[RMDB]
RNA sequence: GGGAACGACUCGAGUAGAGUCGAAAAAGCAGUCACUGCCGGCCCAUUCAUGGAUAAUGCUAUUAAUGUUGGUGGUACAGGAUUACAGUAUGCCGCCAUUACUGCACCUUAUGUAGUUCUCACUGGCUCAGCAAUCGCUUCGGCGAUUGCAAAAGAAACAACAACAACAAC
Reactivity to 2A3 in 0.01 (KOAc 150mM, MgCl2 10mM, bicine 150mM(pH8.5), 24C), signal-to-noise 4, nucleotides 027 to 129: a000g010c020a000g010u070c040a030c150u050g020c020c000g000g000c000c040c000a040u050u160c100a070u060g000g000a020u050a150a040u180g010c020u030a030u150u060a110a020u090g120u170u150g030g010u000g010g000u030a060c020a080g060g030a060u090u050a050c010a000g040u060a020u070g010c030c030g000c010c020a050u080u010a000c040u000g000c010a050c050c000u060u060a100u120g040u070a050g020u060u030c050u040c010a050c050u020g010g030c020u050c040a020
Reactivity to DMS in 0.01 (KOAc 150mM, MgCl2 10mM, bicine 150mM(pH8.5), 24C), signal-to-noise 5, nucleotides 027 to 129: a060g000c050a060g030u060c080a010c060u000g030c060c040g060g020c050c010c030a110u000u000c120a130u040g000g030a050u050a030a040u050g000c080u000a040u020u030a060a070u050g010u030u020g020g020u000g030g050u060a070c170a190g010g070a110u080u000a110c080a020g030u080a070u000g050c060c080g040c060c080a000u000u000a020c040u010g000c180a060c100c010u030u020a060u070g010u060a050g030u040u000c030u060c000a100c110u020g000g020c080u000c110a130
Structure probing data (2A3 and DMS) for a 170-nucleotide construct. For DMS the reverse transcriptase was MarathonRT.